Chemical mapping of a 170-nucleotide RNA with DMS and 2A3.
RNA sequence: GGGAACGACUCGAGUAGAGUCGAAAAAAUGGGCGCGUGUUGAAGGUAAGGACGGAUUUGUCAGUGUAGAGCUACAACCUCCUUGCAAAUUCUUGAUUGCGGGACCAAAAGGACCUGAAAUCCGAUAAUACUCACACCUUCGGGUGUGAGAAAAGAAACAACAACAACAAC
Reactivity to DMS in 0.01 (KOAc 150mM, MgCl2 10mM, bicine 150mM(pH8.5), 24C), signal-to-noise 3, nucleotides 027 to 129: a040a020u060g040g000g000c040g020c020g010u000g010u020u040g100a070a060g010g030u000a060a030g000g070a060c200g010g030a090u020u060u020g040u000c230a020g010u020g020u060a000g020a200g030c010u050a050c020a010a050c050c090u020c010c030u000u070g050c040a030a010a150u080u030c090u130u110g000a050u020u050g000c000g000g000g000a130c080c040a020a040a040a040g040g000a040c000c000u000g010a060a100a080u050c040c270g000a080u100a050a040u050a100
Reactivity to 2A3 in 0.01 (KOAc 150mM, MgCl2 10mM, bicine 150mM(pH8.5), 24C), signal-to-noise 2, nucleotides 027 to 129: a000a010u150g000g010g000c050g000c030g000u180g000u060u070g050a060a000g060g000u000a000a000g030g000a030c170g060g000a000u060u000u110g080u010c080a010g010u000g040u050a040g060a040g130c000u010a000c000a010a010c000c000u000c000c000u000u000g000c000a020a000a120u140u080c080u050u120g080a090u000u000g020c020g000g000g000a020c000c000a010a000a100a070g030g020a070c020c060u100g020a090a010a010u050c080c000g000a010u050a140a070u100a060
Description:
For 2A3, 2,606 sequencing reads were counted. DMS adducts were read by reverse transcription with MarathonRT. For 2A3 the reverse transcriptase was SuperScript II with manganese. Values cover nucleotides 27 to 129.